This 177-nucleotide RNA was probed chemically with DMS.
The RNA was probed in 150 mM KOAc, 10 mM MgCl2 and 150 mM bicine (pH 8.5) at 24 C.
It was measured as part of the RMDB library TTRINS.
The DMS profile rests on 1,294 reads.

RNA sequence: GGGAACGACUCGAGUAGAGUCGAAAAGAUAUGGAUCCCUGAGGGAGCUCGCAAUACACUACAGGAUACUCGGAAACGAGUAUCCUGUAGUGUAUUGCGGAGCAUCGAUCUCACGGAUCCUAAGUCACUCAAAUAAAAGGUUCGCCUUUUAUUUGAGAAAAGAAACAACAACAACAAC
Reactivity to DMS in 0.01 (KOAc 150mM, MgCl2 10mM, bicine 150mM(pH8.5), 24C), signal-to-noise 1, nucleotides 027 to 126: g000a100u000a300u010g010g010a000u000c000c000c070u000g000a030g010g010g000a030g040c010u000c000g000c000a050a020u000a000c000a000c000u000a020c000a030g030g010a040u000a020c000u000c000g040g000a100a080a160c000g030a040g010u000a000u020c000c000u000g000u000a000g020u000g000u010a000u010u020g000c000g030g010a030g020c000a110u000c260g000a060u010c000u000c000a000c300g000g000a000u000c010c000u000a000a050g020u000c030a240